[RMDB]
RNA sequence: GGGAACGACUCGAGUAGAGUCGAAAAACGAUUAUCUCAGUAGGUCUAUUGCUUCCUGGUGUGCAAUCUAACGCUAUAGCAAGUUCUAUGCAUAAUGCGAUUCAUGUUCCACAAUGGUUAAUGGGUGCUGAAUAGUAUCCUUCGGGAUACUAUUCAGAAAAGAAACAACAACAACAAC
Reactivity to 2A3 in 0.01 (KOAc 150mM, MgCl2 10mM, bicine 150mM(pH8.5), 24C), signal-to-noise 5, nucleotides 027 to 126: a010c040g030a060u100u060a080u140c030u000c060a060g050u070a020g000g060u010c050u070a150u050u160g030c010u050u030c000c010u030g030g030u040g050u020g000c030a040a070u060c060u100a070a040c040g000c020u080a050u150a150g020c040a070a020g020u130u040c040u070a060u090g000c030a050u060a100a030u220g040c020g020a010u030u070c030a020u080g070u060u030c020c010a070c040a080a110u130g030g090u130u140a090a050u120g050g060g000u090g070
Reactivity to DMS in 0.01 (KOAc 150mM, MgCl2 10mM, bicine 150mM(pH8.5), 24C), signal-to-noise 6, nucleotides 027 to 126: a080c090g000a090u000u010a080u000c050u000c050a120g010u000a050g000g010u000c050u010a120u010u000g000c040u000u000c030c010u000g000g010u000g000u000g010c100a070a070u010c110u010a060a070c080g010c020u000a100u000a070g010c040a040a050g010u000u000c060u010a060u000g000c100a080u000a060a090u000g010c040g000a100u000u000c050a040u010g010u000u000c040c020a050c110a080a070u000g010g010u000u000a060a080u000g010g000g010u010g010
About this RNA
An RNA of 177 nucleotides, treated with 2A3 and DMS and read out base by base. Values cover nucleotides 27 to 126. As a SHAPE reagent, 2A3 marks flexible, mostly unpaired nucleotides at the ribose 2'-OH.